[RMDB]
RNA sequence: GGGAACGACUCGAGUAGAGUCGAAAAUUAGCAGACCGCAGGUCGCAGUGACUAGGGGGGAGCGACUGUUUACUAAAAACACAGGGGGCUGCAAUCCGGCAACGGUUUGUACAGCCCCUGAGUCCUGCUCCUAUCAGUAGUUCGCUACUGAUAGGAGAAAAGAAACAACAACAACAAC
Reactivity to 2A3 in 0.01 (KOAc 150mM, MgCl2 10mM, bicine 150mM(pH8.5), 24C), signal-to-noise 4, nucleotides 027 to 126: u100u060a020g000c030a020g030a100c040c050g100c100a050g040g040u030c020g000c050a020g090u060g150a070c070u100a080g020g010g000g000g000g020a030g010c020g030a030c010u020g040u010u070u030a120c060u060a040a050a030a040a000c050a010c010a030g000g000g010g000g000c000u020g000c000a000a010u000c010c010g000g000c040a090a070c020g020g010u000u010u000g030u070a040c010a010g000c000c020c000c000u000g000a000g010u000c000c000u020g030
Reactivity to DMS in 0.01 (KOAc 150mM, MgCl2 10mM, bicine 150mM(pH8.5), 24C), signal-to-noise 5, nucleotides 027 to 126: u000u020a060g010c050a080g010a070c040c210g030c100a080g010g020u000c030g030c050a070g020u020g000a060c110u010a110g000g010g000g000g000g020a080g010c040g000a080c070u000g000u010u000u010a080c110u040a040a030a070a080a050c110a080c100a120g010g000g010g000g010c000u000g000c020a030a000u000c000c000g010g010c300a100a150c000g000g000u010u000u010g000u020a100c020a020g000c000c000c000c010u000g000a030g000u000c030c030u010g010
Source information:
Chemical mapping of a 177-nucleotide RNA with 2A3 and DMS. For 2A3 the reverse transcriptase was SuperScript II with manganese. The RNA was probed in 150 mM KOAc, 10 mM MgCl2 and 150 mM bicine (pH 8.5) at 24 C. For 2A3, 4,584 sequencing reads were counted.